The record gives the reactivity of an RNA of 170 nucleotides to DMS and 2A3. DMS adducts were read by reverse transcription with MarathonRT. For 2A3 the reverse transcriptase was SuperScript II with manganese. The RNA was probed in 150 mM KOAc, 10 mM MgCl2 and 150 mM bicine (pH 8.5) at 24 C. It was measured as part of the RMDB library 15KLIB.
RNA sequence: GGGAACGACUCGAGUAGAGUCGAAAAGUUUCCCCUUAUGUCCAGUCCCUCUCCCGUCCUGGUGAAGGGAGAUUCCGGAACGUUUAGCAUUUGAGGGACAAAGCCGCCCCCGGGCGCUCCCCUCGGAACACCCUAUAGUUCGCUAUAGGGAAAAGAAACAACAACAACAAC
Reactivity to DMS in 0.01 (KOAc 150mM, MgCl2 10mM, bicine 150mM(pH8.5), 24C), signal-to-noise 9, nucleotides 027 to 129: g010u030u010u020c010c010c010c130u010u010a070u020g020u010c030c090a090g000u000c020c020c020u000c000u010c030c010c020g030u040c060c040u020g040g040u100g000a080a050g020g030g010a070g030a090u000u000c070c040g010g000a030a060c120g040u030u010u030a080g030c100a120u000u000u020g010a010g010g000g000a060c100a090a060a070g020c050c030g020c020c010c000c090c140g000g000g000c010g030c000u000c010c010c010c020u000c030g020g020a060a060c150a120
Reactivity to 2A3 in 0.01 (KOAc 150mM, MgCl2 10mM, bicine 150mM(pH8.5), 24C), signal-to-noise 9, nucleotides 027 to 129: g040u010u040u050c010c000c000c000u060u120a070u160g040u040c010c010a020g020u000c000c010c000u010c010u000c010c000c000g070u080c020c050u140g100g020u180g070a060a040g010g040g010a020g000a030u090u020c040c020g030g030a080a060c020g080u070u110u190a060g030c060a140u030u030u180g040a080g000g000g000a020c030a030a090a000g060c070c050g010c020c020c000c010c030g040g010g000c010g000c000u010c010c000c000c000u010c000g010g010a040a020c050a070